Chemical mapping of a 177-nucleotide RNA with DMS and 2A3.
Source: RMDB library OK1LIB, as collected in RNAgym.
The 2A3 profile rests on 4,052 reads.
[RMDB]
RNA sequence: GGGAACGACUCGAGUAGAGUCGAAAAAUACACAUGGCAGCUAAGGCACAACGUCACGUUCUACGACGCCCUUUACGUCGCACUGGCCACCGCACUGGAUGUCCCGCUGCUCACGGGCGACUCGCGGGGCCUAAGUAGGUUUCGACCUACUUAGGCCAAAAGAAACAACAACAACAAC
Reactivity to DMS in 0.01 (KOAc 150mM, MgCl2 10mM, bicine 150mM(pH8.5), 24C), signal-to-noise 2, nucleotides 027 to 126: a110u030a080c180a070c130a100u020g000g000c000a050g010c030u020a090a080g030g020c020a090c040a090a070c080g000u000c070a140c050g000u000u010c040u000a080c100g000a060c030g040c040c020c030u030u050u050a080c020g010u010c000g020c020a090c050u040g010g010c010c040a190c050c020g000c000a090c080u010g000g000a120u030g000u000c000c000c000g030c010u010g000c040u000c090a080c110g020g000g000c020g000a030c030u010c050g010c000g000g020
Reactivity to 2A3 in 0.01 (KOAc 150mM, MgCl2 10mM, bicine 150mM(pH8.5), 24C), signal-to-noise 5, nucleotides 027 to 126: a000u150a010c080a010c040a080u070g060g020c060a040g030c050u090a060a080g060g000c050a050c060a150a050c070g050u070c020a010c060g080u070u060c050u120a060c040g040a020c040g060c000c010c010u080u100u060a030c050g010u010c030g000c030a020c070u020g020g000c010c000a060c020c030g040c030a030c070u090g020g030a050u080g130u120c010c000c000g010c020u050g000c000u010c000a030c010g010g000g000c000g050a030c030u010c020g030c010g010g010